[RMDB]
RNA sequence: GGGAACGACUCGAGUAGAGUCGAAAAGAUAUGGAUAUCCAACCGGCAUUGAGUCAUGACAUGAGUAACAAUCGGAAACGAUUGACUCAACAGCAUGAACUCAAUGCCGGUUGGAUAUCCUAAGUCACUUCGAGUAAUAGUUCGCUAUUACUCGAAGAAAAGAAACAACAACAACAAC
Reactivity to DMS in 0.01 (KOAc 150mM, MgCl2 10mM, bicine 150mM(pH8.5), 24C), signal-to-noise 3, nucleotides 027 to 126: g000a050u000a300u000g000g000a010u000a010u000c010c010a010a010c000c000g000g010c000a020u000u000g000a030g020u000c010a020u020g000a080c070a300u000g020a010g010u000a050a130c010a020a000u000c000g010g010a130a080a210c000g010a010u000u000g010a130c010u020c010a020a040c300a180g010c000a010u020g000a060a030c010u000c000a000a010u000g000c010c000g000g000u000u010g000g000a000u000a000u000c000c000u000a020a060g000u000c030a230

Structure probing data (DMS) for a 177-nucleotide construct. The DMS profile rests on 3,121 reads. The data come from the RNA Mapping Database (RMDB), library TTRINS. Values cover nucleotides 27 to 126. The reactions ran in a buffer of 150 mM KOAc, 10 mM MgCl2 and 150 mM bicine (pH 8.5), at 24 C. DMS adducts were read by reverse transcription with MarathonRT.